[RMDB]
RNA sequence: GGGAACGACUCGAGUAGAGUCGAAAAUUGAAUGAUACACUCAACAAAGAUCAACUUCUGUCAUCCAGCAAAUACACCAUCCAACGGAGCACAGGAGAUAGUAUUGAUACUCCUAAUUAUGAUGUGCCCCCUAAUUCUAGUUCGCUAGAAUUAGGGGAAAAGAAACAACAACAACAAC
Reactivity to 2A3 in 0.01 (KOAc 150mM, MgCl2 10mM, bicine 150mM(pH8.5), 24C), signal-to-noise 8, nucleotides 027 to 126: u100u110g060a020a100u080g050a030u090a050c050a030c050u070c030a040a130c040a070a180a030g060a050u040c020a030a040c040u080u030c020u030g080u030c010a080u020c000c010a010g040c050a030a110a060u100a080c080a050c010c040a050u080c030c030a060a040c100g060g010a040g010c020a010c020a030g010g040a020g040a030u070a030g100u050a050u050u160g070a060u100a130c040u040c020c010u060a160a150u170u180a130u230g140a080u090g010u040g030c000
Reactivity to DMS in 0.01 (KOAc 150mM, MgCl2 10mM, bicine 150mM(pH8.5), 24C), signal-to-noise 3, nucleotides 027 to 126: u000u030g010a050a040u030g000a090u020a070c080a070c090u010c080a080a060c130a040a060a070g010a060u010c080a060a070c070u000u000c020u010g000u010c060a100u030c040c000a020g020c050a060a040a090u020a130c130a090c090c050a050u020c040c040a060a110c140g030g010a050g020c060a010c030a040g000g000a020g030a070u030a040g030u000a110u020u010g000a070u040a020c030u000c000c000u000a030a050u040u040a020u010g020a090u000g010u020g000c090
The data come from the RNA Mapping Database (RMDB), library OK1LIB. Chemical mapping of a 177-nucleotide RNA with 2A3 and DMS. For 2A3, 7,692 sequencing reads were counted. For DMS, 4,966 sequencing reads were counted. Conditions: 150 mM KOAc, 10 mM MgCl2 and 150 mM bicine (pH 8.5), 24 C. DMS adducts were read by reverse transcription with MarathonRT.